[RMDB]
RNA sequence: GGGAACGACUCGAGUAGAGUCGAAAAUGAGAAGCAUUCGUGCUUCUCAGAAAUGGUGCCCAAAGAGGACCUGGGGGUGUCUGGGCUGCUAAACUCAUCAGCUAACCGCGAUCUUCGGAUCGCGGAAAGUUACCAAGGAAUUCGUUCCUUGGUAACUAAAAGAAACAACAACAACAAC
Reactivity to 2A3 in 0.01 (KOAc 150mM, MgCl2 10mM, bicine 150mM(pH8.5), 24C), signal-to-noise 3, nucleotides 027 to 126: u030g000a010g000a010a000g000c020a020u060u160c230g060u020g010c000u000u000c000u000c000a000g000a010a120a020u130g060g000u070g070c010c000c040a090a130a010g120a040g020g030a050c030c040u070g040g030g010g010g010u030g010u030c030u050g010g040g000c020u050g000c010u040a030a070a040c050u050c050a120u030c020a070g040c040u050a060a080c000c000g000c010g000a010u000c010u040u050c160g100g000a000u010c010g000c000g000g010a000a010
Reactivity to DMS in 0.01 (KOAc 150mM, MgCl2 10mM, bicine 150mM(pH8.5), 24C), signal-to-noise 4, nucleotides 027 to 126: u000g000a010g000a000a010g010c000a030u000u020c230g030u000g000c000u000u010c000u000c000a010g000a050a080a070u000g010g010u010g020c010c000c010a060a100a150g020a140g000g020a070c040c040u000g010g020g010g010g030u000g010u000c040u000g010g000g010c020u000g010c110u000a030a050a100c100u010c050a090u000c050a060g020c100u020a110a230c000c000g000c000g010a000u000c000u010u020c160g010g000a010u000c000g010c000g010g000a000a020